About this RNA: The record gives the reactivity of an RNA of 177 nucleotides to DMS. It was measured as part of the RMDB library 15KREP.
[RMDB]
RNA sequence: GGGAACGACUCGAGUAGAGUCGAAAAUCGUCUUCCUCGGUCAACCUCCGGAGUUCCUCUUCCUCCUCCUUGCUGAGUGACUUUCCUCCCGCGCUCAGCUGCUUCUUCUUGUUCUCGAGGGCUUUCCGAACUCCUCUAUGUUCGCAUAGAGGAGUUCAAAAGAAACAACAACAACAAC
Reactivity to DMS in 0.01 (KOAc 150mM, MgCl2 10mM, bicine 150mM(pH8.5), 24C), signal-to-noise 1, nucleotides 027 to 126: u000c060g000u010c070u000u000c060c000u010c050g000g010u000c030a100a140c080c020u000c030c030g000g010a120g030u000u000c020c010u010c060u000u000c020c000u000c030c000u000c010c020u010u010g010c020u010g000a070g010u000g000a090c060u000u000u000c040c010u010c030c020c070g020c040g010c000u000c010a030g000c000u010g010c110u010u000c020u010u000c030u000u000g000u010u000c010u000c040g020a060g000g010g020c150u000u000u010c080c040